This 207-nucleotide RNA was probed chemically with 2A3.
[RMDB]
RNA sequence: GGGAACGACUCGAGUAGAGUCGAAAAGGGGUCAGGCGGAAUGAGCGACUCUUGGAUUUACGUGCUGAAGCCUCCACGGCACGUUGUCAGAGUCCCAUUGCCAUGACGGAGGCACCCAAAAGCGAUCUUGUAUUGCUUCGGCAAUACAAGAUCGCAACUAAACUAUGGCCUUCGGGCCAUAGUUUAGAAAAGAAACAACAACAACAAC
Reactivity to 2A3 in 0.01 (KOAc 150mM, MgCl2 10mM, bicine 150mM(pH8.5), 24C), signal-to-noise 1, nucleotides 027 to 156: g090g020g010g000u040c070a060g000g060c030g050g200a070a080u110g040a100g160c100g030a030c030u030c050u060u160g120g010a080u140u140u210a010c000g000u010g000c000u000g020a070a030g010c010c010u000c040c000a020c000g000g040c020a020c010g000u010u000g070u050c140a020g000a000g030u020c010c000c000a060u040u110g050c020c090a180u040g010a000c070g010g010a010g000g010c000a030c020c010c010a070a180a000a030g000c000g000a000u000c000u000u010g000u040a010u010u010g000c000u050u090c240g050g000c010a000a000u000a010c010a000a000g000a020u020c000g010c000a000a000